[RMDB]
RNA sequence: GGGAACGACUCGAGUAGAGUCGAAAAUGCAUGGCUGUCGUCAGCUCGUGCCGUGAGGUGUCGCGUUAAGUCGCUAAACGAGCGAAACCCUUGUCGUUAGUUGCCAGCACGUAAUGGUGGGGACUCUAGUAUUAGAGUGUUUCGACACUCUAAUACUAAAAGAAACAACAACAACAAC
Reactivity to 2A3 in 0.01 (KOAc 150mM, MgCl2 10mM, bicine 150mM(pH8.5), 24C), signal-to-noise 6, nucleotides 027 to 126: u130g000c050a030u040g040g000c000u020g050u150c040g050u080c040a010g000c030u020c030g040u050g010c020c010g050u060g040a080g020g060u070g030u070c040g000c010g030u020u060a110a080g160u050c000g000c020u060a080a100a030c040g020a020g000c020g020a070a050a060c010c010c000u010u090g060u020c040g030u020u070a140g010u060u060g090c000c000a010g010c020a020c040g040u050a040a070u080g040g000u050g000g000g000g030a020c000u000c020u070
Reactivity to DMS in 0.01 (KOAc 150mM, MgCl2 10mM, bicine 150mM(pH8.5), 24C), signal-to-noise 6, nucleotides 027 to 126: u010g000c060a070u010g010g010c020u010g000u010c130g000u020c070a110g020c020u000c040g020u010g000c020c040g010u010g010a130g010g010u000g000u010c170g000c030g020u010u000a090a140g010u000c010g020c020u010a050a140a070c040g010a050g010c010g000a070a080a110c040c010c010u000u010g010u010c020g000u000u000a080g010u000u000g010c010c020a060g010c040a040c050g020u000a090a060u020g000g030u010g000g000g010g000a110c090u010c090u000
Chemical mapping of a 177-nucleotide RNA with 2A3 and DMS. 2A3 is a SHAPE reagent: it acylates the 2'-hydroxyl of flexible nucleotides of all four kinds. For 2A3 the reverse transcriptase was SuperScript II with manganese.